Structure probing data (2A3) for a 207-nucleotide construct. The reactions ran in a buffer of 150 mM KOAc, 10 mM MgCl2 and 150 mM bicine (pH 8.5), at 24 C. Values cover nucleotides 27 to 156. Source: RMDB library OK3TST, as collected in RNAgym.

RNA sequence: GGGAACGACUCGAGUAGAGUCGAAAAAGUGCUGCAGUAAACAUACGUGUGCAUGUGUCUUUAUAGUAGAAUGAUUUAUAAUCCUUUGAGUAUAUACACAGUAAUGGGAUUGCUGGGUCAAAUGGCAUUUCUAGUUCUAGAUCCUUGAGGAAUUGCCGCACCGCAAAUUAUUCGUAAUUUGCGGUGCAAAAGAAACAACAACAACAAC
Reactivity to 2A3 in 0.01 (KOAc 150mM, MgCl2 10mM, bicine 150mM(pH8.5), 24C), signal-to-noise 1, nucleotides 027 to 156: a000g110u060g010c020u060g000c120a000g000u080a100a030a000c010a030u110a070c100g060u010g000u010g110c020a010u030g050u000g020u000c080u080u140u030a100u030a050g110u020a050g100a130a060u090g000a050u080u150u090a130u100a120a100u000c000c000u030u020u040g040a010g020u010a020u060a000u020a130c020a000c000a030g010u050a110a060u060g000g000g090a020u000u040g040c020u060g080g000g000u020c030a040a040a040u060g020g000c010a020u000u110u030c060u040a060g040u050u030c020u040a040g000a040u000c010c000u020u020g010a010g000g060a050a040u100u070g050c050c070